[RMDB]
The data come from the RNA Mapping Database (RMDB), library OK3TST. Structure probing data (DMS and 2A3) for a 207-nucleotide construct. For DMS, 12,268 sequencing reads were counted. For 2A3, 7,484 sequencing reads were counted. High DMS reactivity at an A or C suggests that its Watson-Crick edge is free.
RNA sequence: GGGAACGACUCGAGUAGAGUCGAAAAGCGGAGGGUAUCAGUCGGUGGCUAAUUAUCAGAUUCGUAGAUUUCAAGGCGAGAUUGAUGCGUGGAUUAAGGCCGCUGAAAGCACGUUAGAACAUGCCAUUGAGAUAUUCGUAAGGGAUAUUCACGAUGCAGAUGAUCGUAUAUUCGUAUACGAUCAUCUAAAAGAAACAACAACAACAAC
Reactivity to DMS in 0.01 (KOAc 150mM, MgCl2 10mM, bicine 150mM(pH8.5), 24C), signal-to-noise 5, nucleotides 027 to 156: g020c060g010g010a150g000g020g030u000a070u000c040a100g020u000c040g020g020u000g000g010c030u000a060a150u010u000a100u000c080a110g000a160u000u000c050g030u000a120g000a110u000u010u000c040a090a150g020g010c110g010a120g010a080u010u000g000a100u000g000c040g020u000g020g010a100u000u010a100a170g000g030c000c020g010c030u000g010a080a070a080g000c020a030c050g030u010u000a080g010a080a080c060a060u000g010c000c010a090u000u010g010a130g000a060u000a080u000u000c030g020u010a160a150g020g010g010a050u000a030u000u000c030a090c030g010a080u000g000c150
Reactivity to 2A3 in 0.01 (KOAc 150mM, MgCl2 10mM, bicine 150mM(pH8.5), 24C), signal-to-noise 8, nucleotides 027 to 156: g010c040g010g050a060g020g020g010u070a070u130c050a020g100u090c030g010g030u020g030g000c000u020a090a040u110u140a050u070c050a030g100a220u130u100c030g010u070a030g030a170u060u110u030c070a130a030g140g000c040g030a020g010a060u020u090g030a040u090g020c030g030u040g040g000a010u050u080a070a080g060g010c000c000g000c010u010g020a020a010a010g030c020a000c040g030u050u070a040g010a070a030c040a070u120g030c050c030a020u030u050g020a050g020a040u040a030u040u070c040g040u100a080a070g070g000g000a010u010a030u040u080c040a030c110g030a020u070g030c030